The record gives the reactivity of an RNA of 207 nucleotides to DMS.
[RMDB]
RNA sequence: GGGAACGACUCGAGUAGAGUCGAAAAGCUGUGGUGCAACUCUUUAAGGCAAUAACGAACUAAUUCUAAGCAAGUAAUGGAGAAAUGCCAGGGUCACUAUCUAGCCAUAAUAGUGCUUGACAGUAUGAGAAUCUGCUACCCUUCGGGGUAGCAGAAACCAAACUCAGUAGUUCGCUACUGAGUUUGGAAAAGAAACAACAACAACAAC
Reactivity to DMS in 0.01 (KOAc 150mM, MgCl2 10mM, bicine 150mM(pH8.5), 24C), signal-to-noise 1, nucleotides 027 to 156: g030c010u010g020u000g040g020u000g010c030a040a100c050u000c020u000u010u010a060a100g030g000c010a050a090u000a160a100c080g000a100a150c080u000a090a090u010u010c020u000a040a120g020c040a030a120g030u020a040a020u020g000g010a170g060a040a030a040u010g010c000c000a030g000g030g020u030c040a030c020u000a020u000c030u000a100g000c130c150a150u000a050a050u010a060g010u030g010c010u010u000g030a070c050a030g020u010a100u000g010a160g000a060a080u000c000u010g000c000u010a010c000c000c000u000u020c240g050g000g030g020u010a000g030c000a000g030a010a010a200